[RMDB]
RNA sequence: GGGAACGACUCGAGUAGAGUCGAAAAUUCGGCUUCAUCCUCGGGCCACUCGACCAUGAACCAUUCUUCCGGUCUGGGCUCGGAGCGCAAGGUGUCGCGAUGGGCGGGACGCACCCGGAUGGCGGCGCCCAACCACUGAUUUCGAUCAGUGGUUGGGAAAAGAAACAACAACAACAAC
Reactivity to DMS in 0.01 (KOAc 150mM, MgCl2 10mM, bicine 150mM(pH8.5), 24C), signal-to-noise 3, nucleotides 027 to 126: u000u030c050g010g010c020u000u010c030a070u010c110c090u000c040g020g000g010c010c020a120c090u030c130g010a070c010c000a070u050g000a090a120c130c080a110u030u030c070u000u010c080c100g000g010u000c010u030g000g020g010c020u000c010g010g000a170g000c010g030c080a100a120g000g020u030g000u020c010g000c020g020a210u040g010g020g030c040g040g010g000a050c090g010c060a090c060c030c050g010g000a080u010g010g000c010g000g020c050g000
Reactivity to 2A3 in 0.01 (KOAc 150mM, MgCl2 10mM, bicine 150mM(pH8.5), 24C), signal-to-noise 7, nucleotides 027 to 126: u090u020c020g010g010c020u080u050c030a120u040c010c020u010c010g020g000g000c010c000a130c030u050c030g060a070c010c040a080u140g060a050a080c050c030a140u130u060c050u120u020c050c040g070g030u010c040u060g030g050g040c020u020c060g060g020a050g000c050g010c030a090a140g120g030u100g080u130c020g020c030g040a050u080g010g060g000c010g030g010g020a010c020g010c060a100c000c010c010g050g010a050u060g060g020c020g020g000c030g030